[RMDB]
RNA sequence: GGGAACGACUCGAGUAGAGUCGAAAAGAUAUGGACCAUCUCCUCACUCUUGGACCUCGGAAACGAGCUAGAGUGGUGGAGAGUGGUCCUAAGUCGUGAUCUCCUCCCUGUUCGCAGGGAGGAGAAAGGUUAAGGUCUCGUUCGCGAGACCUUAACCAAAAGAAACAACAACAACAAC
Reactivity to 2A3 in 0.01 (KOAc 150mM, MgCl2 10mM, bicine 150mM(pH8.5), 24C), signal-to-noise 1, nucleotides 027 to 126: g000a030u070a050u100g010g000a010c000c000a030u000c000u000c020c000u010c010a000c000u040c000u080u180g110g170a300c040c020u000c000g000g030a040a060a020c010g000a010g040c000u010a000g000a010g000u020g020g120u260g000g000a030g010a000g030u040g000g000u040c000c000u010a000a000g010u000c000g100u080g080a100u000c000u000c000c000u010c000c010c020u020g000u030u100c250g020c120a000g040g000g000a000g010g020a000g000a010a010a000
Reactivity to DMS in 0.01 (KOAc 150mM, MgCl2 10mM, bicine 150mM(pH8.5), 24C), signal-to-noise 1, nucleotides 027 to 126: g020a000u000a300u010g000g000a010c000c000a030u000c000u000c000c000u010c000a000c000u020c000u010u010g020g000a160c300c020u010c000g020g000a090a100a120c000g000a000g020c020u000a010g000a000g000u000g000g000u010g000g010a000g000a020g040u000g010g000u000c000c000u000a010a080g010u000c030g000u030g010a180u000c000u000c000c000u000c000c000c000u000g000u000u020c150g010c010a010g010g010g010a000g000g010a000g000a020a000a020
Chemical mapping of a 177-nucleotide RNA with 2A3 and DMS.